An RNA of 177 nucleotides, treated with DMS and 2A3 and read out base by base. The RNA was probed in 150 mM KOAc, 10 mM MgCl2 and 150 mM bicine (pH 8.5) at 24 C. Reactivities are given for positions 27 through 126.
[RMDB]
RNA sequence: GGGAACGACUCGAGUAGAGUCGAAAACUGGCUAGGCGGUGUCCCCUUCCUCCCUCACCGCUCCAUGUGCGUCCCUCCCGAAGCUGCGCGCUCGGUCGAAGAGGACGACCAUCCCCGAUAGAGGAGGCUGGUAGAAGAAGUUCGCUUCUUCUACCAGAAAAGAAACAACAACAACAAC
Reactivity to DMS in 0.01 (KOAc 150mM, MgCl2 10mM, bicine 150mM(pH8.5), 24C), signal-to-noise 5, nucleotides 027 to 126: c090u000g010g020c300u020a070g010g050c020g010g010u000g000u020c010c040c020c090u000u010c030c000u000c030c010c030u010c030a050c020c000g010c010u000c010c020a020u020g000u000g000c010g020u000c000c000c000u020c000c010c000g000a060a090g030c010u010g000c140g010c070g010c010u000c020g000g030u000c150g000a070a030g020a130g040g000a030c000g010a040c030c020a070u000c020c010c010c110g000a100u020a040g000a140g000g000a030g030g000
Reactivity to 2A3 in 0.01 (KOAc 150mM, MgCl2 10mM, bicine 150mM(pH8.5), 24C), signal-to-noise 7, nucleotides 027 to 126: c040u020g030g030c090u090a060g050g000c000g000g000u000g030u110c040c030c000c020u090u070c000c000u020c000c000c000u020c000a010c000c000g000c010u010c000c000a050u080g060u080g070c000g000u000c010c000c000u010c020c000c000g050a150a030g010c020u060g030c030g010c010g000c160u000c000g010g040u050c050g020a050a030g050a150g030g000a000c000g010a020c020c000a020u030c000c000c010c000g060a070u060a090g090a090g040g000a010g000g000